Chemical mapping of a 177-nucleotide RNA with 2A3 and DMS. For 2A3 the reverse transcriptase was SuperScript II with manganese. For DMS the reverse transcriptase was MarathonRT. The DMS profile rests on 6,488 reads. DMS (dimethyl sulfate) methylates the pairing face of unpaired adenines and cytosines.
[RMDB]
RNA sequence: GGGAACGACUCGAGUAGAGUCGAAAAUGAUUGCUCUUCGGAGCAAUCACACUACCGAGGUUGUUGCUCGGUAUAAACAACAAACCCUUGGAUACAAGGGAAGAAGAAAACGAUUCGUCGUUUUCAACAUUUUUAGUUGUUUCGACAACUAAAAAUGAAAAGAAACAACAACAACAAC
Reactivity to 2A3 in 0.01 (KOAc 150mM, MgCl2 10mM, bicine 150mM(pH8.5), 24C), signal-to-noise 2, nucleotides 027 to 126: u030g000a000u000u000g000c010u030c010u050u080c300g020g000a000g000c020a020a000u010c000a010c000a020c010u040a030c010c000g020a010g020g060u060u060g020u050u060g110c010u020c010g000g000u010a040u040a010a030a010c050a010a000c010a030a080a080c000c010c040u020u020g080g050a220u200a300c010a020a010g000g120g020a010a020g020a040a000g010a010a020a010a010c020g010a010u040u100c240g020u000c010g010u060u000u000u000c010a000a020
Reactivity to DMS in 0.01 (KOAc 150mM, MgCl2 10mM, bicine 150mM(pH8.5), 24C), signal-to-noise 5, nucleotides 027 to 126: u000g000a010u000u000g020c000u000c000u000u020c180g030g010a010g020c000a000a000u000c000a020c120a130c120u010a130c020c000g010a010g000g010u000u010g000u000u000g020c000u010c010g000g000u010a010u000a030a060a070c090a050a050c090a060a100a260c000c010c000u000u010g000g000a200u010a120c010a000a010g000g000g000a040a040g000a120a130g000a000a010a000a020c000g020a020u000u010c150g010u000c000g010u000u000u000u000c000a110a180